[RMDB]
RNA sequence: GGGAACGACUCGAGUAGAGUCGAAAAUGAAAGAUAUGCUAGGAAUGUUUAGCGAUACAUUUUACCAAAAAUCGCUGCGAUUCCAAGAAUUCAUAUUUAUUUUGAAACGCUACUGGGAUGUCUGCAACCAUGCACUCAAUUUCGAUUGAGUGCAUGGAAAAGAAACAACAACAACAAC
Reactivity to 2A3 in 0.01 (KOAc 150mM, MgCl2 10mM, bicine 150mM(pH8.5), 24C), signal-to-noise 6, nucleotides 027 to 126: u110g020a050a080a010g050a010u060a010u110g070c070u080a060g020g090a030a020u010g030u040u130u160a060g000c010g000a010u020a070c040a060u090u090u070u160a160c060c000a020a060a010a010a000u000c000g000c000u000g000c020g090a040u000u000c010c000a010a020g030a050a120u110u060c010a010u020a050u090u130u050a210u030u080u060u050g040a030a030a020c050g020c020u030a020c030u040g020g010g050a050u080g020u030c020u040g020c000a010a040
Reactivity to DMS in 0.01 (KOAc 150mM, MgCl2 10mM, bicine 150mM(pH8.5), 24C), signal-to-noise 4, nucleotides 027 to 126: u000g010a060a050a090g020a030u000a020u000g000c080u000a090g010g000a040a010u000g010u030u010u010a020g020c000g000a050u000a060c210a100u010u010u010u050a170c220c250a020a020a070a070a000u000c000g010c010u000g010c240g000a030u000u000c000c020a100a060g000a220a070u030u000c030a000u010a060u000u000u000a080u010u000u000u000g020a150a070a050c060g000c010u010a020c080u000g000g000g000a050u030g010u020c000u010g010c130a100a190